[RMDB]
RNA sequence: GGGAACGACUCGAGUAGAGUCGAAAAGCCAAGGGAUGAGGAUUGACUGCAACCCCUGCCCAGAGCUGGAGGCCUCAUCCUCCCUCUCUCCAUCUCCCCCGGCCAGCGAGGCAGCUGAGGGUGCUGCAACAUUAAAUCCAUUCGUGGAUUUAAUGUUAAAAGAAACAACAACAACAAC
Reactivity to DMS in 0.01 (KOAc 150mM, MgCl2 10mM, bicine 150mM(pH8.5), 24C), signal-to-noise 9, nucleotides 027 to 126: g010c050c070a160a130g010g000g010a030u000g000a020g010g010a240u010u010g000a150c100u010g010c060a070a090c030c010c010c040u000g000c020c020c120a140g000a110g020c050u000g010g000a130g010g000c020c010u000c030a020u000c010c010u000c020c010c010u000c060u000c020u000c020c020a080u010c070u000c020c010c010c020c030g010g010c040c030a040g010c050g010a100g010g010c020a040g010c140u000g000a110g010g010g010u000g010c030u000g000c080
Reactivity to 2A3 in 0.01 (KOAc 150mM, MgCl2 10mM, bicine 150mM(pH8.5), 24C), signal-to-noise 5, nucleotides 027 to 126: g050c010c020a060a070g030g000g000a010u020g010a020g030g030a060u080u190g120a120c060u100g020c030a080a240c000c000c000c020u020g020c000c020c020a080g010a020g030c030u040g000g020a040g030g080c020c010u010c010a040u030c010c010u030c010c000c000u020c010u000c010u010c020c010a110u040c040u040c020c010c000c010c010g000g020c010c000a020g020c010g030a060g060g000c010a010g010c020u040g040a090g020g050g020u040g000c010u020g010c000